[RMDB]
RNA sequence: GGGAACGACUCGAGUAGAGUCGAAAAAAUGUUUGUAUAGUAAUUAAGCAACAGGUUAAUAUUCAUGACUUAAAAGAUUAAAGAAAUAAGCAAAACAUGUUAGCUGGCAACUCACAGAAAAAGAAUUAAAUUGCCAAUGAGCACACGAGCACAUGAACUUGAUACGUUGUUUCGACAACGUAUCAAGAAAAGAAACAACAACAACAAC
Reactivity to 2A3 in 0.01 (KOAc 150mM, MgCl2 10mM, bicine 150mM(pH8.5), 24C), signal-to-noise 2, nucleotides 027 to 156: a000a000u060g030u080u050u050g030u060a160u110a110g050u020a110a190u270u060a090a010g020c010a000a060c000a040g000g060u060u110a090a050u070a090u140u060c030a040u060g050a020c010u040u090a040a040a050a140g060a080u140u140a130a010a000g050a020a140a030u180a060a000g040c000a000a000a000a160c000a030u020g000u000u030a040g010c030u020g030g000c020a000a040c030u050c030a040c010a000g140a070a140a030a000a000g000a040a000u070u120a080a080a020u100u020g000c000c000a020a060u050g040a010g000c080a000c010a000c140g050a020g030c160a000c000a090u110g060a060a030
Reactivity to DMS in 0.01 (KOAc 150mM, MgCl2 10mM, bicine 150mM(pH8.5), 24C), signal-to-noise 1, nucleotides 027 to 156: a040a020u000g000u000u000u000g010u000a200u000a100g030u000a010a060u000u000a060a140g030c040a090a050c040a020g010g090u000u010a070a110u000a060u000u000c040a090u030g000a110c010u000u030a030a080a120a220g010a180u000u000a080a040a080g000a150a020a110u000a030a090g010c040a050a040a100a220c030a010u010g040u000u000a030g030c060u010g030g010c050a060a050c040u000c040a090c070a150g010a090a010a020a190a120g000a030a060u040u000a050a030a060u000u000g070c000c010a010a030u000g000a080g030c030a050c040a110c040g060a110g010c030a040c010a040u010g010a050a170